Structure probing data (2A3 and DMS) for a 207-nucleotide construct. For 2A3, 4,842 sequencing reads were counted. The RNA was probed in 150 mM KOAc, 10 mM MgCl2 and 150 mM bicine (pH 8.5) at 24 C. It was measured as part of the RMDB library OK3TST. 2A3 adducts were read by reverse transcription with SuperScript II with manganese. For DMS, 7,927 sequencing reads were counted.

[RMDB]
RNA sequence: GGGAACGACUCGAGUAGAGUCGAAAACGUGGAAACCACAGGGCAUGAGGACAGGCGGAGACAACGCUGGACCAUCUCACAGCCACAUCAAGAGGCUGCCCACAUCAGGGCUUUCUACGUGGUUGCAAGGAACACAAACCUGUGUGCUCCAUUUGCAUAUAAAUGACUAUUUCGAUAGUCAUUUAUAAAAAGAAACAACAACAACAAC
Reactivity to 2A3 in 0.01 (KOAc 150mM, MgCl2 10mM, bicine 150mM(pH8.5), 24C), signal-to-noise 6, nucleotides 027 to 156: c040g000u000g000g000a020a020a020c010c000a020c030a040g010g030g040c110a080u120g040a070g020g000a050c050a080g100g190c040g030g050a140g030a120c080a080a010c040g020c000u040g020g080a090c010c010a120u030c030u020c010a030c010a010g030c020c000a020c020a040u190c090a090a060g020a000g160g000c160u040g040c010c040c000a040c000a120u240c100a060g000g000g000c000u000u070u000c010u020a030c050g000u000g010g010u010u020g020c040a070a050g050g030a110a030c040a010c010a100a100a060c030c010u030g010u010g030u050g050c020u000c000c010a030u070u070u140g020c030a010
Reactivity to DMS in 0.01 (KOAc 150mM, MgCl2 10mM, bicine 150mM(pH8.5), 24C), signal-to-noise 4, nucleotides 027 to 156: c060g010u010g010g000a070a080a090c040c000a300c030a100g030g030g050c040a080u000g010a130g040g040a130c040a230g010g010c010g010g010a290g030a220c110a080a080c050g020c000u010g020g010a300c020c020a080u010c030u010c030a060c020a060g050c010c000a030c060a110u000c080a120a170g010a080g000g000c060u000g000c020c000c000a130c120a140u000c110a130g000g010g000c020u000u000u000c020u000a060c020g020u000g000g020u000u010g010c000a050a090g020g000a060a050c030a050c040a050a090a130c120c040u000g010u000g020u000g010c070u010c000c000a110u000u000u000g010c050a210